[RMDB]
RNA sequence: GGGAACGACUCGAGUAGAGUCGAAAACACAGGGAUCGCCAGUCUUCAGACUUACCUGAUCGUGUCGCAGUCCGAGCGGCAUGUCGUGGAAUACCGCCGGGCAGGCAACGGCUGGGAGAUGCACGAGCCGUCAUACGGGAUUCGUCCCGUAUGACGGAAAAGAAACAACAACAACAAC
Reactivity to DMS in 0.01 (KOAc 150mM, MgCl2 10mM, bicine 150mM(pH8.5), 24C), signal-to-noise 2, nucleotides 027 to 126: c110a130c110a070g000g000g000a050u000c030g010c050c020a030g000u020c020u000u000c100a090g000a060c050u000u040a220c070c010u020g020a070u020c070g010u010g010u010c020g000c030a210g030u000c030c060g010a110g000c000g000g030c050a010u000g030u020c030g040u020g000g000a180a100u000a140c120c030g010c000c000g000g010g000c040a070g000g020c020a070a060c090g010g000c010u020g010g000g000a080g010a070u000g000c070a060c090g000a090g040
Reactivity to 2A3 in 0.01 (KOAc 150mM, MgCl2 10mM, bicine 150mM(pH8.5), 24C), signal-to-noise 7, nucleotides 027 to 126: c080a010c030a040g070g000g060a070u040c050g020c060c020a030g010u030c020u100u100c060a090g030a150c030u100u130a100c020c000u060g030a140u120c040g020u010g030u070c040g000c090a030g050u010c010c030g030a030g020c010g000g000c020a020u050g090u060c060g070u120g070g080a110a070u050a100c000c020g000c010c010g010g020g000c040a040g010g040c020a020a060c030g020g000c010u050g030g020g010a110g010a030u110g020c030a010c090g040a020g030